[RMDB]
RNA sequence: GGGAACGACUCGAGUAGAGUCGAAAACUUAACCUCUCUGAGCCUGUCAUCUGUGAAAUGGGAUAUAAUUUUCUUUGCUGUCCUAGGAUUUUUGGGAGCUUACUGAGUAAACACAGAUAAAAACACAGUGAACUGGCAAACAUGACAUGUGGCAGGGAACUACUACCUUAUUCGUAAGGUAGUAGUUAAAAGAAACAACAACAACAAC
Reactivity to 2A3 in 0.01 (KOAc 150mM, MgCl2 10mM, bicine 150mM(pH8.5), 24C), signal-to-noise 5, nucleotides 027 to 156: c020u100u080a030a020c010c010u040c010u000c030u050g070a020g060c000c010u020g010u030c010a080u020c010u020g030u030g070a100a120a110u090g030g020g040a020u040a030u080a170a140u110u130u100u020c060u010u100u090g040c030u030g040u050c000c020u030a080g160g000a280u070u100u080u190u160g030g010g010a020g010c000u010u030a040c030u040g030a020g060u100a010a120a040c070a010c010a090g060a060u150a070a090a010a010a010c030a010c000a010g020u020g080a080a040c050u050g040g000c000a010a050a020c030a050u080g050a000c000a040u080g000u020g010g040c000a010g000g020g000
Reactivity to DMS in 0.01 (KOAc 150mM, MgCl2 10mM, bicine 150mM(pH8.5), 24C), signal-to-noise 3, nucleotides 027 to 156: c050u010u000a120a130c030c020u000c030u010c050u010g030a170g010c020c010u010g030u010c030a070u010c070u000g050u000g000a050a170a110u000g000g000g020a120u000a070u010a080a060u000u000u000u000c070u010u020u010g030c040u000g010u010c030c010u000a160g020g000a190u000u000u000u010u000g010g030g010a070g020c060u000u000a070c050u010g010a120g010u000a070a080a080c080a240c070a120g000a200u010a060a060a090a090a060c040a060c030a080g030u000g020a050a080c040u000g010g020c030a060a050a090c080a100u000g010a070c070a080u010g000u000g000g010c030a060g000g010g000